[RMDB]
RNA sequence: GGGAACGACUCGAGUAGAGUCGAAAAAGUGAAAGGAAGCAUAUUUUACUGGCAGGUGAUGAGGUGUAGGAGGACAAGUCAUACAUUUGGACUUUACAGAGCAGUGGACACUCAGUCAGCUGCUGUCAACCUUACACUCGUUCGCGAGUGUAAGGUUAAAAGAAACAACAACAACAAC
Reactivity to 2A3 in 0.01 (KOAc 150mM, MgCl2 10mM, bicine 150mM(pH8.5), 24C), signal-to-noise 2, nucleotides 027 to 126: a000g060u060g020a090a020a010g030g020a010a020g060c050a040u040a100u130u110u070u050a110c070u050g040g000c010a050g120g020u030g020a030u040g020a000g000g050u010g000u060a050g000g080a010g030g000a010c040a060a000g020u010c020a060u060a220c030a100u080u020u150g010g010a000c020u030u030u050a060c060a050g060a010g030c020a000g020u030g080g000a000c000a010c040u160c040a010g070u000c010a050g010c020u010g000c000u000g050u020c010
Reactivity to DMS in 0.01 (KOAc 150mM, MgCl2 10mM, bicine 150mM(pH8.5), 24C), signal-to-noise 4, nucleotides 027 to 126: a060g030u020g000a030a060a070g010g000a060a100g020c090a090u000a080u010u000u010u010a070c070u000g000g010c050a020g000g030u010g030a050u000g010a100g020g030u000g000u000a060g010g010a070g000g020a070c130a000a060g010u000c090a080u010a100c180a110u010u000u000g000g010a080c030u000u000u010a070c160a110g010a100g020c040a050g020u010g000g030a020c010a080c160u010c140a150g000u000c000a070g000c020u000g020c000u010g000u010c150
Annotation
The record gives the reactivity of an RNA of 177 nucleotides to 2A3 and DMS. For DMS, 2,986 sequencing reads were counted. The data come from the RNA Mapping Database (RMDB), library OK2TST. 2A3 adducts were read by reverse transcription with SuperScript II with manganese.